[RMDB]
RNA sequence: GGGAACGACUCGAGUAGAGUCGAAAACUGGGUUUCGACCCAGGUCCACCGUAGGCCUGAACUACAGCGAAGAUAGGCGAAGAACUGAUCUUCGAAAGAGGAUCAGGGAGCCUAUCGGAGCUGCAGGCCUAAACGGCGUCGAGGUCUUCGGACCUAAAAUCGUCAGCUAAUUCGUUAGCUGACGAUUAAAAGAAACAACAACAACAAC
Reactivity to 2A3 in 0.01 (KOAc 150mM, MgCl2 10mM, bicine 150mM(pH8.5), 24C), signal-to-noise 2, nucleotides 027 to 156: c020u010g020g000g030u100u130u220c300g170a090c000c000c010a010g000g010u030c000c020a020c010c000g030u040a010g020g010c010c010u010g010a040a050c050u150a080c300a000g000c010g000a020a040g000a000u010a000g010g000c060g060a240a000g020a060a020c000u000g000a000u030c000u000u000c020g000a000a000a000g010a000g010g000a010u000c000a010g000g000g030a010g000c020c000u010a010u000c000g000g010a020g030c000u000g000c000a010g000g000c000c000u000a000a000a000c010g000g000c020g020u080c110g070a020g020g000u000c020u070u200c300g130g000a010c000c010u040a300a070
Reactivity to DMS in 0.01 (KOAc 150mM, MgCl2 10mM, bicine 150mM(pH8.5), 24C), signal-to-noise 1, nucleotides 027 to 156: c020u000g010g030g020u000u000u010c300g050a050c010c020c000a010g040g000u000c000c000a010c020c000g060u000a010g030g020c010c000u000g040a050a210c040u010a160c000a050g020c010g010a300a300g000a030u000a040g010g000c000g000a140a170g030a120a210c010u030g000a010u000c000u000u000c000g030a180a140a280g030a020g010g000a020u000c000a000g010g000g040a300g070c010c000u010a010u000c000g020g000a300g000c010u000g000c000a000g010g020c000c000u000a000a000a050c040g020g000c010g000u000c100g020a040g030g000u020c010u000u000c300g030g000a030c000c010u000a020a020

Annotation
The record gives the reactivity of an RNA of 207 nucleotides to 2A3 and DMS. 2A3 adducts were read by reverse transcription with SuperScript II with manganese. For DMS the reverse transcriptase was MarathonRT. The DMS profile rests on 1,772 reads. It was measured as part of the RMDB library RNAMAK. The reactions ran in a buffer of 150 mM KOAc, 10 mM MgCl2 and 150 mM bicine (pH 8.5), at 24 C.